[RMDB]
RNA sequence: GGGAACGACUCGAGUAGAGUCGAAAAGGCGACUACGCUUGGGUGCUAAAAUUAAAUACGCUAUGAUGCCGCAUUUAUUAAAAGAGCAUACUAACCCAUUAGAAUGCUUGUGGCCUUGUUUUGUAACUGUAUAACGAUCGUUCGCGAUCGUUAUACAAAAAGAAACAACAACAACAAC
Reactivity to DMS in 0.01 (KOAc 150mM, MgCl2 10mM, bicine 150mM(pH8.5), 24C), signal-to-noise 3, nucleotides 027 to 126: g000g030c030g010a050c050u010a040c120g010c020u000u000g010g010g020u000g000c020u000a030a050a100a080u000u010a030a020a060u010a010c080g000c040u000a090u030g020a070u020g000c100c020g030c050a010u010u000u010a010u030u010a070a050a090a120g000a040g000c000a050u000a130c050u010a060a090c030c020c040a070u030u000a030g010a120a040u000g000c020u000u000g010u000g000g020c040c070u000u010g000u000u000u000u010g000u020a080a190c140
Reactivity to 2A3 in 0.01 (KOAc 150mM, MgCl2 10mM, bicine 150mM(pH8.5), 24C), signal-to-noise 4, nucleotides 027 to 126: g030g000c010g070a010c010u100a020c110g000c020u010u030g010g000g000u090g010c030u110a120a070a010a150u210u120a050a060a020u140a100c030g010c060u070a120u280g110a090u110g060c030c010g010c020a030u030u090u080a160u000u160a110a080a070a030g100a000g010c020a010u030a100c020u050a010a020c000c000c000a010u000u010a060g120a110a050u130g000c030u010u040g040u030g020g000c000c010u000u020g030u040u090u000u030g100u070a010a050c050
The data come from the RNA Mapping Database (RMDB), libraries RFM100 and RFMREP. This 177-nucleotide RNA was probed chemically with DMS and 2A3. 2A3 adducts were read by reverse transcription with SuperScript II with manganese. Values are in units of 0.01, from 0 to 300, in steps of 10. The reactions ran in a buffer of 150 mM KOAc, 10 mM MgCl2 and 150 mM bicine (pH 8.5), at 24 C.